RNA sequence: GGGAACGACUCGAGUAGAGUCGAAAAGAUAUGGACUCCGACAAUGGACAACAGCUUUCGUAACAUCAAAGGACUCGGAAACGAGUCCUUUGUGGAAAGACAUGUCCCUAAACGGAGUCCUAAGUCACAUUGAACUAGUGUUCGCACUAGUUCAAUGAAAAGAAACAACAACAACAAC
Reactivity to DMS in 0.01 (KOAc 150mM, MgCl2 10mM, bicine 150mM(pH8.5), 24C), signal-to-noise 3, nucleotides 027 to 126: g000a060u000a300u010g000g000a020c010u000c000c000g030a070c270a150a240u010g000g010a020c010a070a100c220a180g000c000u000u000u000c010g030u010a160a190c160a090u010c010a000a010a000g010g010a010c000u000c020g000g000a100a060a160c010g010a010g020u000c000c000u000u000u000g000u000g020g000a010a010a030g010a080c110a220u010g010u000c000c000c130u010a060a140a130c000g000g000a010g000u000c000c000u010a020a050g020u000c020a230
Reactivity to 2A3 in 0.01 (KOAc 150mM, MgCl2 10mM, bicine 150mM(pH8.5), 24C), signal-to-noise 3, nucleotides 027 to 126: g020a000u060a040u110g030g010a010c000u000c010c010g020a070c150a070a170u170g010g000a020c030a270a020c080a300g050c030u040u000u030c010g180u190a180a100c070a270u210c040a010a000a020g000g000a010c020u000c000g030g080a160a010a050c020g030a020g070u020c000c010u000u010u010g010u000g000g000a010a010a000g020a010c030a070u300g040u040c060c000c010u300a300a280a030c020g020g000a000g000u000c000c010u000a020a000g000u050c000a000
Conditions: 150 mM KOAc, 10 mM MgCl2 and 150 mM bicine (pH 8.5), 24 C. Structure probing data (DMS and 2A3) for a 177-nucleotide construct. 2A3 adducts were read by reverse transcription with SuperScript II with manganese. It was measured as part of the RMDB library TTRINS. For DMS the reverse transcriptase was MarathonRT. For 2A3, 3,201 sequencing reads were counted.